[RMDB]
RNA sequence: GGGAACGACUCGAGUAGAGUCGAAAAGAUAUGGACACGCUACCCACCAGUAGUAGCCGAAGAACCAUGCAUUAUUCGGAAACGAAUAAUGCAUGGGGAGGCUAUGGGCUGAGGCGUGUCCUAAGUCGCCUGUACUAAUCUUCGGAUUAGUACAGGCAAAAGAAACAACAACAACAAC
Reactivity to 2A3 in 0.01 (KOAc 150mM, MgCl2 10mM, bicine 150mM(pH8.5), 24C), signal-to-noise 1, nucleotides 027 to 126: g090a050u290a210u300g000g000a000c000a000c000g000c000u090a300c000c000c040a000c010c020a000g010u080a030g000u000a000g000c030c000g190a300a100g000a050a030c000c020a010u010g000c000a000u000u000a010u000u020c000g050g000a170a100a090c030g000a000a000u010a000a000u010g000c010a000u000g030g000g000g000a000g000g000c010u000a010u050g110g300g040c040u000g030a010g000g020c000g000u000g000u000c000c000u010a000a000g090u080c120
Reactivity to DMS in 0.01 (KOAc 150mM, MgCl2 10mM, bicine 150mM(pH8.5), 24C), signal-to-noise 1, nucleotides 027 to 126: g070a050u020a180u000g010g000a000c000a020c000g000c030u000a070c000c000c000a300c090c010a030g000u000a300g000u010a010g000c000c000g000a130a200g000a290a120c000c000a000u000g030c000a000u000u000a000u000u000c010g000g000a200a220a210c000g010a030a010u000a000a010u000g010c000a000u010g000g000g000g060a070g000g010c000u000a010u010g020g000g050c050u020g000a020g000g000c000g020u000g000u000c010c000u000a000a040g010u000c160